Source: RMDB library M2PK50, as collected in RNAgym. Chemical mapping of a 177-nucleotide RNA with DMS and 2A3. For 2A3 the reverse transcriptase was SuperScript II with manganese. The reactions ran in a buffer of 150 mM KOAc, 10 mM MgCl2 and 150 mM bicine (pH 8.5), at 24 C. Values cover nucleotides 27 to 126.
[RMDB]
RNA sequence: GGGAACGACUCGAGUAGAGUCGAAAACUGUGAGGCUUCGGCCUCACAGAUAGGUUUCUAUUUAGUGAUUUUUCCAAACCCCUUUGUGCAAAAAUCAUUAAACUCGCGUACGUUUCGACGUACGCAAAUGGCAUUUAUAAUUCGUUAUAAAUGCCAUAAAAGAAACAACAACAACAAC
Reactivity to DMS in 0.01 (KOAc 150mM, MgCl2 10mM, bicine 150mM(pH8.5), 24C), signal-to-noise 7, nucleotides 027 to 126: c010u000g010u000g000a030g020g010c000u010u000c210g030g020c000c000u000c000a000c000a000g000a070u000a060g020g010u000u000u000c010u000a130u000u000u000a010g010u000g010a010u000u000u000u000u000c010c000a010a040a160c130c080c120c200u000u000u000g010u000g020c130a000a010a020a010a000u000c000a010u000u000a010a010a070c300u010c140g000c000g000u000a010c000g000u000u000u010c160g010a040c010g000u000a000c000g020c000a010a010
Reactivity to 2A3 in 0.01 (KOAc 150mM, MgCl2 10mM, bicine 150mM(pH8.5), 24C), signal-to-noise 4, nucleotides 027 to 126: c000u010g000u000g010a000g010g000c030u060u110c300g150g000c020c000u000c000a000c000a010g000a000u040a020g050g010u020u030u020c040u050a140u040u050u000a020g010u020g000a010u000u010u010u010u000c040c010a040a070a180c060c020c020c060u040u060u060g070u080g040c040a010a000a010a000a000u010c000a000u000u020a030a050a040c090u080c170g000c000g000u000a000c000g000u000u030u100c180g070a010c010g000u000a000c000g000c000a000a030